[RMDB]
An RNA of 177 nucleotides, treated with 2A3 and DMS and read out base by base.
For DMS the reverse transcriptase was MarathonRT.
For DMS, 1,070 sequencing reads were counted.
It was measured as part of the RMDB library M2PK90.
DMS (dimethyl sulfate) methylates the pairing face of unpaired adenines and cytosines.
Reactivities are given for positions 27 through 126.
The RNA was probed in 150 mM KOAc, 10 mM MgCl2 and 150 mM bicine (pH 8.5) at 24 C.
RNA sequence: GGGAACGACUCGAGUAGAGUCGAAAAAUAAAGAGCGUAUACGCGUCAUUGAGUGACGUGAAGAUCAUCCAAGUGUGCUGUCUACAGUCGUAGAUAGCGCACAUUACGCUAAGAUGAUCAUAAAAAAGUCGUAUAAAUCCUUCGGGAUUUAUACGACAAAAGAAACAACAACAACAAC
Reactivity to 2A3 in 0.01 (KOAc 150mM, MgCl2 10mM, bicine 150mM(pH8.5), 24C), signal-to-noise 2, nucleotides 027 to 126: a000u190a010a120a010g090a030g000c020g000u050a080u020a190c030g000c000g010u000c010a020u080u300g220a100g220u010g000a000c010g020u010g060a090a020g000a000u010c010a000u010c030c040a100a110g000u000g010u000g000c000u000g010u000c000u010a040c080a260g150u230c170g000u150a000g000a000u000a010g010c010g000c000a000c000a000u000u000a020c000g000c030u030a000a040g010a010u020g010a010u030c040a030u300a020a140a010a000a010a020
Reactivity to DMS in 0.01 (KOAc 150mM, MgCl2 10mM, bicine 150mM(pH8.5), 24C), signal-to-noise 1, nucleotides 027 to 126: a100u040a060a060a090g010a040g000c000g010u000a050u000a080c050g000c020g000u000c000a040u000u040g000a200g040u000g010a010c000g010u000g010a110a120g020a010u010c000a010u010c000c100a130a090g010u000g000u010g010c000u010g000u010c000u000a000c010a210g000u010c210g010u000a000g000a010u000a020g010c030g010c020a000c000a080u030u000a060c050g000c000u000a070a110g000a010u000g000a010u000c000a180u030a030a050a060a080a050a140